[RMDB]
RNA sequence: GGGAACGACUCGAGUAGAGUCGAAAACUUACACCAUAUUGAUCCUAGCGUAUUGAAAGCAGUGGUCCUUAAAGUCUUUCUAAGUGAUACUGAGGGUAUGUUAUGGCUAAAUGAUAAUUUAGCCCCGCUAAUCAGCGAUGUUCGCAUCGCUGAUUAGAAAAGAAACAACAACAACAAC
Reactivity to DMS in 0.01 (KOAc 150mM, MgCl2 10mM, bicine 150mM(pH8.5), 24C), signal-to-noise 3, nucleotides 027 to 126: c050u010u030a040c120a100c030c020a070u010a050u040u010g010a090u000c030c020u000a100g000c110g010u010a090u000u000g000a060a060a070g010c020a060g020u020g000g000u020c000c030u000u000a070a090a130g000u020c050u030u000u000c030u000a070a090g020u070g020a090u000a060c010u020g010a050g000g010g030u010a030u000g020u020u000a110u030g030g000c020u010a010a000a030u000g000a150u080a070a090u010u010u000a010g020c010c000c040c030g000